[RMDB]
RNA sequence: GGGAACGACUCGAGUAGAGUCGAAAAGGAACCACCGGUACAUGCUCCGCUUUGGACCGCGCGAUGAAAACGAGUUUGAUGCCGGUCUACACAAUACCACGGGGCCAUCCUCGGAGAAGGGCCGCCUGCCAGUUGUCGACGAGGAUCUGGUCGACUCCCUAGCGAACAUAUUCGUAUGUUCGCUAGGAAAAGAAACAACAACAACAAC
Reactivity to 2A3 in 0.01 (KOAc 150mM, MgCl2 10mM, bicine 150mM(pH8.5), 24C), signal-to-noise 3, nucleotides 027 to 156: g030g020a020a050c020c010a030c030c010g040g020u040a040c020a060u090g020c020u030c020c030g060c080u150u150u170g110g020a100c000c040g030c030g050c040g210a160u240g130a020a100a070a020c090g020a060g050u020u100u190g140a140u050g010c000c000g010g000u010c000u030a040c090a020c030a030a130u140a170c030c030a040c090g060g020g000g000c000c010a020u000c010c010u020c000g020g000a060g000a040a060g010g000g020c020c040g140c040c030u060g000c020c000a120g070u100u050g100u160c000g000a000c000g000a010g050g020a030u050c050u070g000g000u020c010g020a050c050u090c010
Reactivity to DMS in 0.01 (KOAc 150mM, MgCl2 10mM, bicine 150mM(pH8.5), 24C), signal-to-noise 1, nucleotides 027 to 156: g000g030a070a120c040c070a170c000c000g060g040u010a090c080a150u010g020c020u010c030c000g020c110u000u020u000g020g020a050c000c050g050c120g070c020g040a200u000g010a070a080a120a230c070g000a070g040u000u010u020g000a120u000g040c040c020g040g090u010c080u010a100c010a160c060a110a150u010a150c060c150a090c060g000g000g020g050c020c030a120u030c020c010u000c020g010g010a190g020a100a120g010g030g060c030c060g000c080c030u050g020c070c030a190g030u010u000g000u000c000g020a110c010g000a080g090g020a040u010c110u000g000g040u030c030g000a060c010u000c010